[RMDB]
The record gives the reactivity of an RNA of 177 nucleotides to 2A3 and DMS. Source: RMDB library M2PK90, as collected in RNAgym. The RNA was probed in 150 mM KOAc, 10 mM MgCl2 and 150 mM bicine (pH 8.5) at 24 C.
RNA sequence: GGGAACGACUCGAGUAGAGUCGAAAAAUAAAUGCUGACGUCAACGUGGUCACCCAGGCCAGAAACAGGCCAACAACCCUGACCGGCUGCAAGAAAGGGAAGAAUUUUUCUUUUGCAGGUUCAAAAACCAACAUUGAUAGUUCGCUAUCAAUGUUGGAAAAGAAACAACAACAACAAC
Reactivity to 2A3 in 0.01 (KOAc 150mM, MgCl2 10mM, bicine 150mM(pH8.5), 24C), signal-to-noise 2, nucleotides 027 to 126: a000u120a010a060a040u110g040c010u020g040a030c020g050u060c040a060a040c050g100u090g020g030u020c020a040c010c010c020a050g010g000c010c000a060g060a010a140a040c060a030g000g040c030c000a020a010c010a030a010c020c000c000u010g030a030c020c000g110g010c000u010g000c020a000a060g050a170a040a000g060g050g010a070a050g090a090a040u110u070u000u010u080c000u020u070u000u010g000c030a040g030g000u090u110c060a080a060a020a050a070
Reactivity to DMS in 0.01 (KOAc 150mM, MgCl2 10mM, bicine 150mM(pH8.5), 24C), signal-to-noise 3, nucleotides 027 to 126: a070u020a100a070a060u000g020c040u000g020a090c100g020u000c100a070a080c140g010u010g010g000u010c030a110c020c020c040a060g020g020c000c000a050g010a080a070a100c130a110g000g010c010c020a060a080c140a040a070c030c020c020u000g010a060c020c030g030g000c040u000g000c040a050a080g000a050a040a030g000g020g010a080a060g000a040a040u000u000u010u010u000c010u000u000u000u000g020c020a040g010g040u000u000c080a030a070a060a080a090